[RMDB]
RNA sequence: GGGAACGACUCGAGUAGAGUCGAAAAGGGAUGCUGACUUAGCUUAAAGCAUAAAUGGGUGAUCUUAUAUCACGCUCACUUGAGACAUUUAUUUAUGCAAUGCAACUAAGUGUUGCUGUGUAAAAACCAGCGGAGGAUGAUUCGUCAUCCUCCGCUGAAAAGAAACAACAACAACAAC
Reactivity to 2A3 in 0.01 (KOAc 150mM, MgCl2 10mM, bicine 150mM(pH8.5), 24C), signal-to-noise 3, nucleotides 027 to 126: g050g000g010a080u090g080c030u050g080a080c000u030u050a020g030c000u100u150a050a060a000g030c000a000u000a010a020a000u040g020g010g000u050g110a300u000c010u010u150a130u040a010u220c060a040c190g040c010u150c070a090c040u050u060g030a010g000a030c020a030u020u050u020a020u000u000u030a000u000g000c000a010a130u130g040c000a030a030c020u030a040a110g040u020g000u130u020g000c020u020g000u000g030u060a010a000a050a080a050c020